[RMDB]
RNA sequence: GGGAACGACUCGAGUAGAGUCGAAAAUGAUGGCGAGCAAACAGCCAUGAUCGAAAUAAAUGAAUUCAAUUCAUGUUUUCUCGUUAGCAACUACUUCAUAGGCAUAUUUUCAAUUGCCGAAAGAAACGAUUGCUACCCUUUUCGAAGGGUAGCAAUCAAAAGAAACAACAACAACAAC
Reactivity to DMS in 0.01 (KOAc 150mM, MgCl2 10mM, bicine 150mM(pH8.5), 24C), signal-to-noise 2, nucleotides 027 to 126: u000g020a030u010g000g020c000g000a060g040c160a040a030a070c100a110g020c190c100a010u010g000a040u000c100g020a030a070a080u010a060a130a080u010g000a120a060u030u000c160a090a170u000u030c030a030u000g000u010u000u000u000c000u000c040g000u000u000a050g020c010a080a070c100u010a070c160u000u000c030a020u000a210g000g020c000a010u000a080u000u000u000u000c270a070a060u000u000g040c000c000g030a040a100a150g020a030a070a140c200
Reactivity to 2A3 in 0.01 (KOAc 150mM, MgCl2 10mM, bicine 150mM(pH8.5), 24C), signal-to-noise 2, nucleotides 027 to 126: u070g010a020u060g000g030c000g010a030g000c080a030a000a100c020a050g040c090c040a020u070g020a070u080c020g090a030a080a000u200a060a090a140u140g100a020a060u180u200c040a030a090u070u090c000a040u050g000u000u040u040u000c050u000c010g040u020u020a040g040c000a050a020c000u090a050c000u030u080c010a050u040a060g010g000c000a030u020a090u140u170u130u110c120a180a050u010u030g000c030c000g000a080a050a000g060a010a050a000c110